Conditions: 150 mM KOAc, 10 mM MgCl2 and 150 mM bicine (pH 8.5), 24 C. This 207-nucleotide RNA was probed chemically with DMS and 2A3. Source: RMDB library RNAMAK, as collected in RNAgym. For 2A3, 4,397 sequencing reads were counted.
[RMDB]
RNA sequence: GGGAACGACUCGAGUAGAGUCGAAAAGCGUACUACCACAGCCUGAGGUUGCAGGCACAAUGUGCUAUCUUUCCCAAAUAGGAAAGAUACCCUUGUGCCCAAUCAACCUCCUGCUGUGGUAUCGCAAAAGUAGGUUUCGCUUCGGCGAAACCUACAAUCACCAUAACUUCUUCGGAAGUUAUGGUGAAAAAGAAACAACAACAACAAC
Reactivity to DMS in 0.01 (KOAc 150mM, MgCl2 10mM, bicine 150mM(pH8.5), 24C), signal-to-noise 1, nucleotides 027 to 156: g000c020g040u000a050c120u000a010c000c010a030c000a010g040c000c040u010g020a010g050g000u000u000g030c300a120g020g030c000a010c010a020a000u010g040u020g030c050u000a010u000c000u000u000u000c000c010c020a030a120a240u010a070g000g010a010a000a000g000a010u000a010c030c040c010u000u000g000u000g000c040c010c060a020a140u010c000a000a010c010c000u010c000c020u000g020c000u000g030u000g000g020u000a000u000c000g030c030a060a070a090a140g000u000a010g000g020u000u000u000c010g020c000u000u000c300g050g030c000g000a000a000a020c000c010u000a000c000a030a120
Reactivity to 2A3 in 0.01 (KOAc 150mM, MgCl2 10mM, bicine 150mM(pH8.5), 24C), signal-to-noise 3, nucleotides 027 to 156: g000c010g030u090a110c070u010a000c000c000a010c000a000g010c000c020u010g000a010g000g010u010u020g040c160a050g010g040c010a000c000a000a020u100g070u130g050c090u010a000u010c000u010u010u040c000c020c030a180a300a220u280a090g000g000a000a000a000g000a000u000a000c000c000c000u000u000g000u000g010c000c000c000a020a090u050c000a000a000c000c000u000c000c000u000g000c000u000g000u010g000g000u010a010u010c000g020c010a050a040a020a050g000u000a000g000g000u010u000u000c000g010c020u060u100c270g070g000c000g000a000a000a000c000c000u000a000c000a000a000